Record summary:
Chemical mapping of a 177-nucleotide RNA with DMS and 2A3. Conditions: 150 mM KOAc, 10 mM MgCl2 and 150 mM bicine (pH 8.5), 24 C. The DMS profile rests on 4,916 reads.
RNA sequence: GGGAACGACUCGAGUAGAGUCGAAAACUUGACCAGUCUUCUCGCCUAUUUGCGACGAAUACUGCGUCGUCAGGAUACACUUAUCGGCUUGUUAUGUCAGGAUUUGGACUCCUUGGCGGGUAGCAAACCAUGCUCCUACAUUCGUGUAGGAGCAUGGAAAAGAAACAACAACAACAAC
Reactivity to DMS in 0.01 (KOAc 150mM, MgCl2 10mM, bicine 150mM(pH8.5), 24C), signal-to-noise 3, nucleotides 027 to 126: c030u000u020g010a100c020c020a030g010u020c040u000u010c000u000c020g020c010c170u020a080u090u040u060g010c000g000a020c060g000a050a020u000a030c090u030g010c130g000u000c020g000u010c210a020g010g000a060u020a180c040a040c060u000u020a060u000c040g010g010c030u000u070g010u010u000a050u040g010u000c000a060g040g000a070u010u010u020g000g000a150c130u000c010c000u000u000g000g020c020g020g000g000u000a040g000c060a010a040a170
Reactivity to 2A3 in 0.01 (KOAc 150mM, MgCl2 10mM, bicine 150mM(pH8.5), 24C), signal-to-noise 5, nucleotides 027 to 126: c010u070u130g060a040c010c020a000g010u000c010u010u000c000u000c010g000c020c030u120a200u120u170u230g040c000g000a020c080g010a030a010u060a100c030u080g070c050g030u020c010g000u010c010a010g030g000a010u010a070c070a000c040u030u050a050u110c000g020g000c010u050u060g050u080u150a120u220g040u020c000a020g050g040a040u030u040u090g050g020a030c020u020c010c020u030u030g010g000c000g020g030g010u030a010g010c010a020a000a050